[RMDB]
RNA sequence: GGGAACGACUCGAGUAGAGUCGAAAACUCUGAAGGCAUGAUCACCCCGUCCGAUGCGGAAAUUCGUGCUUCCGUCGAACGCGAAAGUCGGACGGCGGCCAUGAGUCGCAACGCAAAGCCGCGGCAAUAAGCUCGUCGUCGUUCGCGACGACGAGAACUCGAGCUUAUUCUUCGGAAUAAGCUCGAGAAAAGAAACAACAACAACAAC
Reactivity to 2A3 in 0.01 (KOAc 150mM, MgCl2 10mM, bicine 150mM(pH8.5), 24C), signal-to-noise 1, nucleotides 027 to 156: c000u030c030u060g080a250a040g040g000c020a040u050g010a030u200c060a030c000c040c030c000g010u000c000c000g020a030u040g090c090g180g140a000a090a110u120u060c080g060u060g030c100u040u000c000c020g110u110c090g010a040a020c020g020c030g030a190a060a020g050u020c000g010g010a000c000g000g030c040g010g000c000c000a010u020g030a000g040u000c010g000c060a170a040c040g000c130a140a000a040g030c030c000g000c010g040g000c000a030a070u110a100a050g070c000u010c010g000u030c000g000u020c000g040u000u050c120g000c020g130a020c000g000a000c000g000a000g000a000a000